Structure probing data (2A3) for a 207-nucleotide construct.
The reactions ran in a buffer of 150 mM KOAc, 10 mM MgCl2 and 150 mM bicine (pH 8.5), at 24 C.
The 2A3 profile rests on 987 reads.
RNA sequence: GGGAACGACUCGAGUAGAGUCGAAAAAGAGUCGAGUUCGCUCGACUCUAAAAACCGUAGGGAUCUGAUCAGGGAGCGUACUGGGUUCGAAAGAGCCCGUACGCAUCGAUCUGAUAGAUCCCUAAACGGAAAAAAUGUGUCCGUUCGCGGACACAAACCCGUAUCUUAAGUUCGCUUAAGAUACGGGAAAAGAAACAACAACAACAAC
Reactivity to 2A3 in 0.01 (KOAc 150mM, MgCl2 10mM, bicine 150mM(pH8.5), 24C), signal-to-noise 1, nucleotides 027 to 156: a000g000a000g000u030c000g010a010g000u050u050c140g130c050u000c010g000a010c000u000c000u000a010a000a000a020a000c030c000g030u020a040g020g000g010a020u040c030u190g140a020u000c140a000g000g090g000a030g000c000g010u030a030c150u300g010g000g000u000u000c000g050a070a080a060g000a020g000c010c010c000g000u000a010c000g000c000a020u060c000g000a010u000c000u010g000a000u000a010g000a000u000c020c000c000u000a000a000a000c000g020g030a060a010a000a140a070a030u220g010u000g000u000c040c020g010u030u080c300g000c010g140g000a000c000a000c000a020a000a000